[RMDB]
RNA sequence: GGGAACGACUCGAGUAGAGUCGAAAACGGGGCAACUCUUCUCAGAAUCCAGCAAGAGGCGUGGAGAGAGGGCCGCGGUGCUCUGGAGUAGAGGCUCUGCCUUCGAAACACCAUCGAUCGUCCCUUCGAUAUCCAUUACGUUCGCGUAAUGGAUAUCAAAAGAAACAACAACAACAAC
Reactivity to DMS in 0.01 (KOAc 150mM, MgCl2 10mM, bicine 150mM(pH8.5), 24C), signal-to-noise 3, nucleotides 027 to 126: c100g010g020g000g000c100a090a070c010u000c020u010u000c010u060c040a120g010a190a130u010c030c010a100g010c160a120a100g000a070g020g000c090g030u010g000g000a060g000a060g000a040g000g010g010c090c010g020c030g000g000u000g000c000u000c000u010g010g000a050g010u010a070g000a030g000g000c010u010c190u010g030c020c010u000u000c030g000a090a130a120c010a010c130c000a040u000c010g040a130u030c030g000u000c000c000c000u000u000c120
Reactivity to 2A3 in 0.01 (KOAc 150mM, MgCl2 10mM, bicine 150mM(pH8.5), 24C), signal-to-noise 4, nucleotides 027 to 126: c010g000g000g010g040c010a040a080c030u010c000u110u040c020u010c020a020g150a040a080u040c030c020a010g020c070a190a100g060a060g300g050c100g110u090g040g020a040g010a010g020a020g040g020g000c010c000g000c020g020g010u020g010c000u010c010u020g030g010a010g020u020a010g000a010g030g010c030u070c150u300g020c000c000u170u120c000g010a020a010a000c010a010c100c000a020u010c010g020a150u030c010g010u000c000c000c000u050u060c030